Structure probing data (DMS and 2A3) for a 207-nucleotide construct. For DMS, 3,766 sequencing reads were counted. For 2A3 the reverse transcriptase was SuperScript II with manganese. Source: RMDB library OK3TST, as collected in RNAgym. The RNA was probed in 150 mM KOAc, 10 mM MgCl2 and 150 mM bicine (pH 8.5) at 24 C. Values cover nucleotides 27 to 156.
RNA sequence: GGGAACGACUCGAGUAGAGUCGAAAAUAACUCCAGUUGGCAUGAGGGCUUUAGCUCCUGUUGUAUAGAGAUGUUACAGUCUCUCAGUGUUGCAAUUCCAAAUUCCCCAGCAAUAGUUUGAUUGGUUCAGCUAGGGUCAGGCUACCAUCUCUGGUUCAUGUGCACAGUAAUUCGUUACUGUGCACAUAAAAGAAACAACAACAACAAC
Reactivity to DMS in 0.01 (KOAc 150mM, MgCl2 10mM, bicine 150mM(pH8.5), 24C), signal-to-noise 2, nucleotides 027 to 156: u000a060a120c040u000c020c020a140g030u000u000g010g040c080a110u000g030a050g010g030g000c060u000u010u000a110g010c030u000c010c020u000g020u000u000g030u000a140u000a010g010a060g030a040u010g000u000u010a100c170a170g020u000c000u010c020u000c040a080g020u010g040u020u000g000c060a090a170u000u010c030c060a080a100a210u010u000c030c000c010c050a090g030c020a050a120u000a080g010u000u010u010g030a120u000u000g030g010u020u000c050a120g040c030u000a080g010g010g010u010c030a030g010g000c010u000a070c040c030a080u000c050u000c020u000g030g010u000u010c040
Reactivity to 2A3 in 0.01 (KOAc 150mM, MgCl2 10mM, bicine 150mM(pH8.5), 24C), signal-to-noise 1, nucleotides 027 to 156: u110a040a010c020u000c010c000a110g020u010u010g060g030c060a110u110g050a090g000g000g090c050u150u140u120a020g030c000u050c090c000u100g020u120u080g050u090a060u170a050g050a000g000a010u050g030u190u100a080c020a050g030u000c000u000c000u000c090a090g020u050g100u180u060g040c030a000a040u130u060c010c010a070a010a100u060u030c000c010c000c010a030g000c060a050a170u070a070g080u010u140u090g060a090u070u080g000g000u030u060c030a000g010c020u060a020g040g040g000u040c010a020g030g000c000u070a060c000c000a010u060c020u010c040u150g150g000u070u200c020